[RMDB]
RNA sequence: GGGAACGACUCGAGUAGAGUCGAAAAGGCACUGGAGUUCUGUUUUGAAUUAGUGUGUCGUGGCACUUUGGCGGAAGGCUGUGUUUUGCAUCUUAGCCAGCAGCAAUCACAGGUGUGGUGCCAUGACGCAGAUGUUCCAAUUCGUUGGAACAUCUGCAAAAGAAACAACAACAACAAC
Reactivity to 2A3 in 0.01 (KOAc 150mM, MgCl2 10mM, bicine 150mM(pH8.5), 24C), signal-to-noise 2, nucleotides 027 to 126: g080g000c040a000c060u100g090g070a090g030u040u050c060u070g160u100u120u070u120g080a120a070u080u040a070g060u020g010u000g010u050c000g010u000g000g000c020a020c040u100u160u170g090g020c100g070g110a040a020g110g000c020u030g000u000g010u030u050u050u110g010c020a070u050c060u060u120a050g050c020c030a000g010c030a000g000c000a010a020u090c010a010c030a050g050g150u110g080u090g030g030u010g030c000c000a010u000g000a000c030
Reactivity to DMS in 0.01 (KOAc 150mM, MgCl2 10mM, bicine 150mM(pH8.5), 24C), signal-to-noise 2, nucleotides 027 to 126: g010g000c030a030c050u010g020g020a130g010u000u000c040u010g020u000u010u020u010g020a070a070u000u000a080g010u000g020u000g030u010c010g040u010g010g000c000a000c010u010u000u010g020g010c090g030g000a140a100g000g000c010u000g010u000g000u030u000u000u010g020c020a160u000c100u010u000a150g010c140c140a080g020c120a150g010c010a010a030u010c020a010c020a060g010g000u000g030u010g000g000u010g010c010c000a010u000g010a020c030